[RMDB]
RNA sequence: GGGAACGACUCGAGUAGAGUCGAAAAUCAUGUCGUGUCGAAUUACGGCACGGCAAAUGCAAUCAUCCGCGCCGAUAUCCGCGUGGAAGCCGGAAAGCUGACAGAGGCAACGGUGCAGCACCGCGCACUUUUAAUGACUGUUCGCAGUCAUUAAAAGAAAAGAAACAACAACAACAAC
Reactivity to 2A3 in 0.01 (KOAc 150mM, MgCl2 10mM, bicine 150mM(pH8.5), 24C), signal-to-noise 7, nucleotides 027 to 126: u110c030a040u040g000u000c000g000u010g010u000c010g040a110a090u260u140a280c030g000g000c000a000c000g000g000c000a000a000a020u070g000c020a010a130u110c040a060u000c030c000g000c000g030c040c010g060a060u080a080u260c050c020g000c000g010u010g010g020a010a030g010c000c000g040g000a140a130a040g000c020u030g030a080c020a060g120a080g210g010c040a070a050c040g050g040u130g020c020a010g010c010a040c050c010g000c010g000c050a040
Reactivity to DMS in 0.01 (KOAc 150mM, MgCl2 10mM, bicine 150mM(pH8.5), 24C), signal-to-noise 9, nucleotides 027 to 126: u010c080a140u010g020u000c000g020u010g010u010c000g010a300a200u010u010a130c030g000g010c000a000c000g010g000c010a000a050a050u010g010c180a110a120u010c150a100u000c010c010g020c030g020c010c090g010a180u010a090u010c110c150g000c020g030u000g010g000a040a070g010c030c010g000g000a060a080a110g010c020u000g010a070c060a070g010a170g000g000c140a060a110c060g010g020u010g000c030a040g010c030a110c030c020g000c120g020c050a220
The record gives the reactivity of an RNA of 177 nucleotides to 2A3 and DMS. 2A3 adducts were read by reverse transcription with SuperScript II with manganese. Values cover nucleotides 27 to 126.